[RMDB]
RNA sequence: GGGAACGACUCGAGUAGAGUCGAAAAUCGUUUUCGCCAAUCACCACCGCGCCGCGGCUGCCAAGCUGUGCGAGGCCCCGCACGGCGGAACGGGCGCGGGCGCGCAUCAUGUAGUCGAGUGUGCGGAAUAUAAUAGCGGAUUCGUCCGCUAUUAUAUAAAAGAAACAACAACAACAAC
Reactivity to 2A3 in 0.01 (KOAc 150mM, MgCl2 10mM, bicine 150mM(pH8.5), 24C), signal-to-noise 4, nucleotides 027 to 126: u070c030g000u010u010u040u080c030g010c020c010a010a030u050c030a010c020c010a010c030c010g020c010g030c010c010g140c020g130g020c050u000g000c020c010a020a020g000c030u010g000u000g000c000g050a120g050g050c030c030c000c020g000c010a010c000g030g000c010g000g030a020a010c010g010g040g010c000g000c050g020g020g000c020g000c000g000c000a090u130c020a040u190g110u190a060g050u100c090g060a030g120u050g010u040g000c000g020g000a020
Reactivity to DMS in 0.01 (KOAc 150mM, MgCl2 10mM, bicine 150mM(pH8.5), 24C), signal-to-noise 9, nucleotides 027 to 126: u000c060g010u000u000u000u000c020g020c040c030a080a190u000c040a050c030c050a100c100c010g000c010g020c010c010g010c010g010g000c010u000g010c020c050a180a280g000c030u000g010u000g010c000g000a140g020g000c070c080c050c000g010c000a010c000g010g010c010g010g020a140a240c030g000g010g000c010g010c020g010g010g010c000g010c010g000c150a060u010c150a090u010g010u010a050g000u000c100g010a080g010u000g010u000g010c110g010g010a100